RNA sequence: GGGAACGACUCGAGUAGAGUCGAAAAGAUAUGGAGAUGUCGGGAGAUUGGGUAUCGGAAACGAUACACAAUCGAAGAACGAGCAUCUCCUAAGUCAAAUCCUGCCAUCCUUCGGGAUGGCAGGAAAUCCAUAUUAUUUGUUCGCAAAUAAUAUGGAAAAAGAAACAACAACAACAAC
Reactivity to DMS in 0.01 (KOAc 150mM, MgCl2 10mM, bicine 150mM(pH8.5), 24C), signal-to-noise 1, nucleotides 027 to 126: g010a000u000a070u010g000g000a000g030a010u000g010u000c000g010g020g000a020g010a010u000u010g020g010g010u000a010u000c000g020g000a010a010a020c000g000a020u000a000c000a010c000a010a000u000c000g000a100a170g030a180a190c000g020a080g000c010a000u000c000u000c000c000u000a000a100g000u000c010a090a120a200u000c000c010u010g000c000c030a030u000c000c000u000u000c250g040g010g020a030u010g000g000c000a020g000g000a000a050a040